[RMDB]
RNA sequence: GGGAACGACUCGAGUAGAGUCGAAAAAUAAACACACACAACAUAAUGGAAAAACGACUAUCUCUUCGACUGCUUCUGUUAUCGCAUUUCGUGCGAGGAUAAAGGUCGUUCGGAGUGAAAGCGUUCAGUCAAUAGACUUGUUCGCAAGUCUAUUGACAAAAGAAACAACAACAACAAC
Reactivity to 2A3 in 0.01 (KOAc 150mM, MgCl2 10mM, bicine 150mM(pH8.5), 24C), signal-to-noise 3, nucleotides 027 to 126: a010u100a000a100a000c050a010c010a020c020a000c010a120a000c010a130u170a170a140u170g120g050a090a110a020a020a000c030g210a090c000u030a060u110c010u010c000u060u000c000g000a000c010u000g010c000u040u010c020u040g020u030u020a030u040c000g030c020a040u040u210u200c100g060u020g000c010g000a020g010g000a000u020a030a050a000g000g000u010c000g030u090u010c000g010g000a000g010u000g020a040a000a030g000c000g020u070u040c030a010
Reactivity to DMS in 0.01 (KOAc 150mM, MgCl2 10mM, bicine 150mM(pH8.5), 24C), signal-to-noise 2, nucleotides 027 to 126: a020u020a080a030a050c080a040c050a040c040a090c040a040a020c060a060u010a100a060u030g020g010a010a060a080a030a010c040g010a120c020u010a060u000c030u000c010u000u000c000g020a020c020u000g010c000u000u000c050u010g040u000u010a050u000c000g000c000a030u000u000u000c230g020u020g000c000g000a010g000g030a020u000a030a050a060g000g000u000c110g020u000u000c020g030g000a050g010u020g010a020a140a090g000c020g020u010u000c060a170